[RMDB]
RNA sequence: GGGAACGACUCGAGUAGAGUCGAAAAAUUGAUUUGACACGUCGCCUUGCAGUGUUAACUUGGCUCUCAUGAACCUCUUUGAUCUUCCACAAAGGGUAGGCUACGGGUGAAACCUCUUAGGCUAAAAGAUCAAAUAGACUUUCGAGUCUAUUUGAUCAAAAGAAACAACAACAACAAC
Reactivity to 2A3 in 0.01 (KOAc 150mM, MgCl2 10mM, bicine 150mM(pH8.5), 24C), signal-to-noise 3, nucleotides 027 to 126: a000u110u110g050a050u050u010u080g030a010c000a000c040g070u050c020g040c000c010u020u090g000c050a050g010u010g010u120u060a050a060c030u040u080g060g000c010u000c010u010c050a040u080g060a050a050c010c010u020c030u020u020u000g040a050u050c040u120u000c070c020a030c010a030a080a010g050g000g010u020a040g040g020c010u020a020c040g050g000g000u050g070a100a060a050c000c000u000c040u050u100a040g040g000c000u040a060a050a010a110
Reactivity to DMS in 0.01 (KOAc 150mM, MgCl2 10mM, bicine 150mM(pH8.5), 24C), signal-to-noise 4, nucleotides 027 to 126: a080u000u010g000a080u000u000u000g010a070c070a040c090g010u000c090g010c020c020u010u010g020c070a060g020u000g010u010u000a050a050c110u000u000g010g010c030u000c030u000c080a090u000g010a080a090c090c010u000c020u000u000u000g000a080u010c060u000u000c050c070a120c040a030a060a050g000g010g010u000a050g010g010c020u000a040c100g000g000g000u000g010a060a050a120c050c020u000c080u000u000a060g010g020c030u000a040a050a070a110